[RMDB]
RNA sequence: GGGAACGACUCGAGUAGAGUCGAAAAUUUUGUAGAGAUAGGGUUUUGCUACAUUGCCCAGGUUGAUCUCGAACUCCUGAGCUCAAGUGAUCCUCUUGCCUCAGCCUUCCAAAGUGCUGGGACCACACACACCAAUUGCAUUCGUGCAAUUGGUGUGAAAAGAAACAACAACAACAAC
Reactivity to DMS in 0.01 (KOAc 150mM, MgCl2 10mM, bicine 150mM(pH8.5), 24C), signal-to-noise 2, nucleotides 027 to 126: u000u000u000u000g000u040a040g010a050g000a090u000a060g010g010g020u000u000u000u000g020c050u000a040c110a080u000u000g000c060c010c030a030g000g010u000u020g010a050u000c050u020c160g010a080a100c050u000c030c040u000g000a020g010c050u000c120a090a040g030u000g000a040u000c040c030u000c160u000u010g060c100c010u010c050a040g000c030c040u000u020c130c170a030a040a090g020u000g000c010u000g000g000g010a060c030c120a090c170a180
Reactivity to 2A3 in 0.01 (KOAc 150mM, MgCl2 10mM, bicine 150mM(pH8.5), 24C), signal-to-noise 2, nucleotides 027 to 126: u080u070u000u080g030u050a000g010a010g020a130u080a070g050g060g020u040u110u120u110g040c000u050a090c000a140u000u120g010c000c000c030a020g060g030u080u110g060a070u000c040u000c100g030a070a050c040u010c000c020u000g030a030g000c010u010c110a060a010g010u020g100a070u080c000c000u020c060u050u060g050c010c020u000c010a020g000c030c030u110u070c070c070a140a120a060g140u160g060c000u000g010g000g010a000c060c000a040c020a010